[RMDB]
RNA sequence: GGGAACGACUCGAGUAGAGUCGAAAAAGUCACUGUCACUUUAUUUGAGUACAAUGUGGUUACUUACUGUACUCACAGUCAGUAGGUGACCUGACUAUCGUGAGUACAGGUCACCUACAUAUUGUACUCAGUGUCAGUGAGUGACGUGACACUGACACGUAUGCACGUAUUUCGAUACGUGCAUACGAAAAGAAACAACAACAACAAC
Reactivity to 2A3 in 0.01 (KOAc 150mM, MgCl2 10mM, bicine 150mM(pH8.5), 24C), signal-to-noise 9, nucleotides 027 to 156: a000g010u020c020a010c080u120g000u000c000a010c010u070u110u210a150u130u200u050g000a000g000u000a000c000a000a000u000g000u000g030g040u070u050a010c000u010u000a010c000u000g020u040a120c040u070c170a010c010a000g000u030c010a000g000u010a010g030g020u010g010a000c000c000u000g000a010c010u030a080u280c180g130u140g210a020g010u070a220c000a000g000g000u000c000a000c000c000u000a000c000a000u010a000u000u000g000u000a000c000u000c000a010g020u030g080u130c120a090g070u030g110a000g000u000g000a000c000g000u000g000a000c010a020c100u050g030a020c010a000
Reactivity to DMS in 0.01 (KOAc 150mM, MgCl2 10mM, bicine 150mM(pH8.5), 24C), signal-to-noise 3, nucleotides 027 to 156: a080g010u000c000a040c030u000g030u000c030a030c020u000u000u000a070u020u000u010g010a020g000u010a030c000a020a020u010g040u000g010g000u000u000a050c030u010u000a050c050u010g010u020a090c120u010c140a050c040a060g000u000c060a050g030u000a020g030g040u010g000a060c060c000u000g010a080c030u000a060u000c220g020u000g020a080g040u000a100c010a000g040g010u020c010a050c010c000u000a030c000a010u000a010u000u000g030u000a010c010u000c020a020g020u000g030u000c120a130g010u000g010a000g010u010g020a040c030g020u000g010a060c020a090c080u000g000a090c060a180

Source: RMDB library OK3TST, as collected in RNAgym. The record gives the reactivity of an RNA of 207 nucleotides to 2A3 and DMS. For 2A3 the reverse transcriptase was SuperScript II with manganese. As a SHAPE reagent, 2A3 marks flexible, mostly unpaired nucleotides at the ribose 2'-OH.